[RMDB]
RNA sequence: GGGAACGACUCGAGUAGAGUCGAAAAUACUCCUUCGGGAGUAAGAUACCGUAGGCUCAGCAGAGAACCAGAACUACGUAUUCGCAUUCGAAAGAGUGUCCUUUACGCUGGUUCGACGAAGCUGAGCCUAAACGGCUAACCUACUGUUCGCAGUAAAGGUAUUCCUCACAUUCGUGUGAGGAAUACCAAAAGAAACAACAACAACAAC
Reactivity to 2A3 in 0.01 (KOAc 150mM, MgCl2 10mM, bicine 150mM(pH8.5), 24C), signal-to-noise 1, nucleotides 027 to 156: u050a000c000u010c000c030u000u050c230g190g000g000a010g000u010a030a030g060a040u140a010c000c000g000u000a000g010g000c000u000c000a000g030c040a000g020a000g000a040a000c000c000a000g000a170a090c240u290a090c160g000u000a020u010u000c010g000c000a000u000u000c000g050a040a020a010g030a000g010u000g110u300c000c050u000u060u000a000c000g000c030u000g000g060u000u000c000g000a010c000g020a030a000g000c000u010g000a000g000c010c000u000a000a000a000c000g020g030c040u060a050a070c000c000u020a000c000u040g030u060u100c190g040c100a010g110u190a020a090a290